[RMDB]
RNA sequence: GGGAACGACUCGAGUAGAGUCGAAAACUGGCAGGCAUUCAGGUAUUGCUCCUGCAGCAAUUGCCUCCCAGGGGUCGCAGCCCUGAGCAGAGCUCUGUGCAGGGCUGUCCAGCCCUCAGCAGGGCACAGUUUUGUUAGUGUUCGCACUAACAAAACUAAAAGAAACAACAACAACAAC
Reactivity to 2A3 in 0.01 (KOAc 150mM, MgCl2 10mM, bicine 150mM(pH8.5), 24C), signal-to-noise 3, nucleotides 027 to 126: c010u010g050g030c020a000g020g000c020a020u080u070c050a200g220g040u170a160u100u170g040c070u060c070c040u090g030c020a010g020c020a020a120u140u060g000c000c000u010c010c000c000a000g070g010g000g000u070c070g000c030a020g010c020c010c010u030g020a020g000c000a010g020a070g100c070u080c020u290g020u020g010c020a000g000g000g000c000u000g000u020c000c020a020g030c000c000c000u040c030a040g040c050a000g020g010g000c020a020c040
Reactivity to DMS in 0.01 (KOAc 150mM, MgCl2 10mM, bicine 150mM(pH8.5), 24C), signal-to-noise 4, nucleotides 027 to 126: c030u000g000g020c210a020g000g020c030a070u000u000c180a090g010g010u000a040u000u000g010c080u000c010c060u000g000c200a170g000c040a030a050u000u010g010c000c000u000c200c000c020a050g000g010g000g010u000c270g000c030a020g010c000c000c000u000g000a130g020c020a020g000a300g050c300u010c000u000g020u010g010c040a000g000g000g020c000u000g010u000c040c080a150g010c000c000c010u010c170a110g020c110a070g000g000g030c160a100c190